[RMDB]
Background
This 177-nucleotide RNA was probed chemically with 2A3.

RNA sequence: GGGAACGACUCGAGUAGAGUCGAAAACAAAAACGGAUUGUGUCGGUAAUCACAACAAACAAAAACAAAGGGAUUGUGUCCUUAAUCACAAAAACAAAACAAAAAGGAUUGUGUCCGUAAUCACAAACCACCUACUCGGAUUCGUCCGAGUAGGUGGAAAAGAAACAACAACAACAAC
Reactivity to 2A3 in 0.01 (KOAc 150mM, MgCl2 10mM, bicine 150mM(pH8.5), 24C), signal-to-noise 1, nucleotides 027 to 126: c030a000a080a050a000a000c090g070g050a080u000u000g000u000g060u030c000g020g140u240a000a010u180c050a180c230a050a000c110a120a050a000c000a240a100a000a000a000c160a010a300a000g000g000g090a040u000u030g020u000g000u060c000c000u210u190a000a000u110c000a000c010a000a010a000a000a000c130a000a020a000a000c060a000a000a030a100a000g030g060a130u000u130g030u000g000u000c020c000g080u100a000a180u160c040a130c000a010a000a000
For 2A3 the reverse transcriptase was SuperScript II with manganese. Source: RMDB library OK1LIB, as collected in RNAgym.